[RMDB]
RNA sequence: GGGAACGACUCGAGUAGAGUCGAAAAGAUAUGGAGCGAUUCCAGACAUGUCCCGAGUCGGAAACGACUUUGGGACAACAGCUGGAUCGCUCCUAAGUCAAACAAACGUUUCUUCGGAAACGUUUGACUCAAAAACUAACUUCGGUUAGUUUUUGAGAAAAGAAACAACAACAACAAC
Reactivity to 2A3 in 0.01 (KOAc 150mM, MgCl2 10mM, bicine 150mM(pH8.5), 24C), signal-to-noise 1, nucleotides 027 to 126: g000a000u020a010u050g000g000a000g020c000g010a010u300u140c030c000a010g010a020c180a190u150g010u000c000c000c010g000a010g010u020c000g000g030a020a010a010c020g050a020c000u070u160u300g010g010g030a010c020a020a010c060a050g000c000u000g010g000a000u000c000g000c000u010c000c000u010a000a010g000u000c010a030a040a100c000a010a010a000c000g000u010u000u010c030u020u080c300g120g020a000a000a000c000g000u010u010u010g010a000
Reactivity to DMS in 0.01 (KOAc 150mM, MgCl2 10mM, bicine 150mM(pH8.5), 24C), signal-to-noise 3, nucleotides 027 to 126: g000a020u000a060u010g000g000a010g020c000g010a020u000u000c000c000a010g000a020c110a120u020g000u000c000c000c000g000a000g010u000c010g010g000a020a010a070c000g000a010c010u000u000u010g070g000g010a010c000a020a020c120a200g000c010u000g010g010a020u000c010g000c010u000c000c000u000a000a050g000u000c010a170a150a300c010a020a000a000c000g010u000u000u000c000u000u010c240g010g000a010a000a000c000g000u000u000u000g010a200
An RNA of 177 nucleotides, treated with 2A3 and DMS and read out base by base. For DMS, 5,424 sequencing reads were counted. As a SHAPE reagent, 2A3 marks flexible, mostly unpaired nucleotides at the ribose 2'-OH. Reactivities are given for positions 27 through 126. For 2A3, 6,985 sequencing reads were counted.